[RMDB]
RNA sequence: GGGAACGACUCGAGUAGAGUCGAAAAUCGUGAGAUGUGGUGCCUCACGCGCUCGAGGCGUCCGUGGUCAGAGAGACCACUGACGCAAAAACUCGAGCGCAAAUAAACAGCAUUACAUAUAGAAUAAGGUAUAUACUACGUUCGCGUAGUAUAUACCAAAAGAAACAACAACAACAAC
Reactivity to 2A3 in 0.01 (KOAc 150mM, MgCl2 10mM, bicine 150mM(pH8.5), 24C), signal-to-noise 6, nucleotides 027 to 126: u130c040g010u030g020a040g000a050u280g000u010g020g010u000g000c010c000u010c010a020c060g000c000g000c000u000c000g000a000g000g000c000g010u000c010c010g000u000g000g000u010c060a050g100a050g020a020g000a300c000c000a000c000u000g000a000c000g000c000a050a080a040a030a030c000u000c000g000a000g000c000g000c000a010a000a000u090a010a060a010c070a020g010c000a000u020u020a010c020a010u160a020u080a130g230a150a130u230a190a030
Reactivity to DMS in 0.01 (KOAc 150mM, MgCl2 10mM, bicine 150mM(pH8.5), 24C), signal-to-noise 3, nucleotides 027 to 126: u010c130g010u000g000a020g010a130u040g020u020g000g010u000g010c000c030u010c050a040c100g000c010g010c000u000c000g010a010g030g000c030g040u000c020c100g000u000g000g000u000c020a180g030a210g010a240g000a010c020c000a000c000u000g000a020c000g000c040a010a020a050a160a300c000u000c000g000a010g010c020g000c000a000a030a030u010a040a080a120c270a140g000c000a000u020u010a010c020a090u040a150u050a090g020a120a070u020a040a150
Structure probing data (2A3 and DMS) for a 177-nucleotide construct. As a SHAPE reagent, 2A3 marks flexible, mostly unpaired nucleotides at the ribose 2'-OH. The DMS profile rests on 5,931 reads. For DMS the reverse transcriptase was MarathonRT. The reactions ran in a buffer of 150 mM KOAc, 10 mM MgCl2 and 150 mM bicine (pH 8.5), at 24 C.